[RMDB]
RNA sequence: GGGAACGACUCGAGUAGAGUCGAAAACUCGUAUUCGUACGAGGCCGAGAUAUGGACUCGAACUACGAUCUAAGCCUCGUUGAAAUAGUUUCGGAAACGAAACUAUGGAGAGGCGAUGAUCGCGAGUCCUAAGUCAAACUACCUCCUUCGGGAGGAAUCCAUCUUGAGAAUUCGUUCUCAAGAUGGAAAAAGAAACAACAACAACAAC
Reactivity to 2A3 in 0.01 (KOAc 150mM, MgCl2 10mM, bicine 150mM(pH8.5), 24C), signal-to-noise 6, nucleotides 027 to 156: c000u000c000g000u010a030u080u090c260g010u050a000c000g000a010g010g010c020c030g190a150g000a050u050a030u100g000g000a000c000u010c010g020a110a090c090u100a060c250g010a010u000c000u090a100a020g000c010c000u010c010g060u050u040g000a010a000a000u000a000g000u010u000u000c010g000g010a030a040a030c000g000a000a000a000c000u000a010u010g010g010a040g000a000g010g000c020g000a030u060g000a000u000c000g000c000g000a000g000u000c000c000u000a010a000g000u000c020a020a060a130c080u190a140c030c010u020c010c000u050u090c230g100g000g000a000g020g000a000a010
Reactivity to DMS in 0.01 (KOAc 150mM, MgCl2 10mM, bicine 150mM(pH8.5), 24C), signal-to-noise 3, nucleotides 027 to 156: c000u000c010g040u000a070u000u000c240g060u000a040c010g000a020g000g010c090c050g000a210g020a090u000a190u000g010g010a050c010u010c030g020a120a270c040u000a080c000g000a020u000c000u010a300a300g010c020c000u010c000g020u000u000g020a240a230a010u000a010g020u010u000u000c000g030g000a220a090a200c010g000a000a010a010c000u010a000u000g000g000a140g000a000g030g000c010g010a070u000g000a030u000c000g000c000g000a050g010u000c000c000u000a000a020g000u000c010a040a090a080c060u010a100c020c000u000c000c000u000u000c220g040g000g000a010g010g000a010a000